RNA sequence: GGGAACGACUCGAGUAGAGUCGAAAAUUAAAAGGGAACGACUCGAGUAGAGUCGAAAAGACGCUCAACUCAUGGAGGGCAAGACGAAUAGCUACAUAUUCGACAUGAGGGCGCCGUUCGCAAAAAACGAGUAAUGAUAGUUCGCUAUCAUUACUCGAAAAGAAACAACAACAACAAC
Reactivity to DMS in 0.01 (KOAc 150mM, MgCl2 10mM, bicine 150mM(pH8.5), 24C), signal-to-noise 3, nucleotides 027 to 126: u000u000a090a090a060a190g000g000g010a040a060c010g000a000c000u000c000g000a040g000u000a060g000a010g010u000c000g000a020a030a090a130g020a070c050g010c030u000c120a130a150c070u000c020a010u000g000g020a090g020g000g010c110a020a060g030a160c030g010a020a010u000a030g020c100u000a080c130a120u000a050u000u000c000g020a130c000a010u000g000a050g000g000g010c050g040c010c010g000u000u000c040g000c110a000a050a050a050a050a060
Reactivity to 2A3 in 0.01 (KOAc 150mM, MgCl2 10mM, bicine 150mM(pH8.5), 24C), signal-to-noise 3, nucleotides 027 to 126: u140u110a120a110a050a110g010g010g000a000a000c000g000a000c000u000c000g000a000g010u010a010g000a000g000u000c000g000a000a000a000a000g020a010c020g020c010u040c060a080a090c030u020c010a020u030g030g030a080g030g130g060c070a040a010g070a020c030g000a020a010u040a020g030c070u160a080c070a110u060a050u030u030c020g020a030c020a030u020g000a020g000g000g000c010g000c000c020g040u050u030c160g020c110a080a080a010a000a020a020

Chemical mapping of a 177-nucleotide RNA with DMS and 2A3.
It was measured as part of the RMDB library M2PK90.
For DMS, 2,841 sequencing reads were counted.
Values cover nucleotides 27 to 126.
The 2A3 profile rests on 9,001 reads.
For DMS the reverse transcriptase was MarathonRT.
For 2A3 the reverse transcriptase was SuperScript II with manganese.